[RMDB]
This 177-nucleotide RNA was probed chemically with DMS. For DMS, 1,878 sequencing reads were counted.

RNA sequence: GGGAACGACUCGAGUAGAGUCGAAAAAAAAGAUAUGGACGUAUGAGUAGACGCGGUCGCGAUGAAAGGAGCUCGGAAACGAGCUCCUGGAGCGACCGACCCGUCGAAAGUACGUCCUAAGUCAAAAUCAUAUUUUGUUGUUCGCAACAAAAUAUGAAAAAGAAACAACAACAACAAC
Reactivity to DMS in 0.01 (KOAc 150mM, MgCl2 10mM, bicine 150mM(pH8.5), 24C), signal-to-noise 2, nucleotides 027 to 126: a140a090a110a100g000a020u000a240u010g000g010a030c010g020u010a000u000g000a070g010u010a130g010a030c010g000c030g020g000u000c000g030c000g020a080u040g010a130a110a020g000g000a020g000c000u000c000g010g000a040a030a110c010g020a020g000c000u000c050c000u000g010g000a020g000c000g000a020c050c000g020a040c140c280c150g010u000c010g000a140a070a270g000u000a010c000g000u000c000c000u000a000a050g000u010c010a090a030a100a100
Reactivities are given for positions 27 through 126. High DMS reactivity at an A or C suggests that its Watson-Crick edge is free. The reactions ran in a buffer of 150 mM KOAc, 10 mM MgCl2 and 150 mM bicine (pH 8.5), at 24 C.